This 177-nucleotide RNA was probed chemically with DMS and 2A3. The 2A3 profile rests on 604 reads. It was measured as part of the RMDB library OK1LIB. DMS adducts were read by reverse transcription with MarathonRT. Values cover nucleotides 27 to 126.
RNA sequence: GGGAACGACUCGAGUAGAGUCGAAAAGUGCAGAGUGAAAUUCAUAGGUGCGGCGCCAAUGUGGCGUAACGACCCGGUACUCCGCGCAGUCGCGCUGAAAACGUUCUGUGUUGGCGUUCGGGCCUCACCAGCCUAUGGAUUUCGAUCCAUAGGCUGGAAAAGAAACAACAACAACAAC
Reactivity to DMS in 0.01 (KOAc 150mM, MgCl2 10mM, bicine 150mM(pH8.5), 24C), signal-to-noise 1, nucleotides 027 to 126: g020u040g020c060a040g010a080g010u070g010a040a080a020u020u000c040a010u000a090g000g010u000g040c170g000g110c020g000c000c000a100a020u020g000u030g020g030c050g000u050a030a040c130g000a130c010c030c000g000g000u020a040c000u000c000c000g010c030g030c040a020g000u060c100g000c080g000c020u010g000a070a070a140a300c020g020u000u020c000u010g000u000g020u000u020g040g040c070g000u000u000c000g000g000g000c060c000u020c070a240
Reactivity to 2A3 in 0.01 (KOAc 150mM, MgCl2 10mM, bicine 150mM(pH8.5), 24C), signal-to-noise 2, nucleotides 027 to 126: g170u180g090c100a060g080a160g160u290g040a070a030a180u110u210c070a060u060a070g000g010u140g050c020g010g010c000g000c060c000a120a100u190g110u170g110g020c050g010u040a060a040c070g070a040c020c000c000g010g010u010a000c000u030c000c000g000c000g000c010a000g080u090c190g000c000g000c000u040g000a020a000a000a070c000g070u160u020c000u010g010u000g020u000u210g000g000c000g040u050u030c000g000g000g070c030c000u050c000a000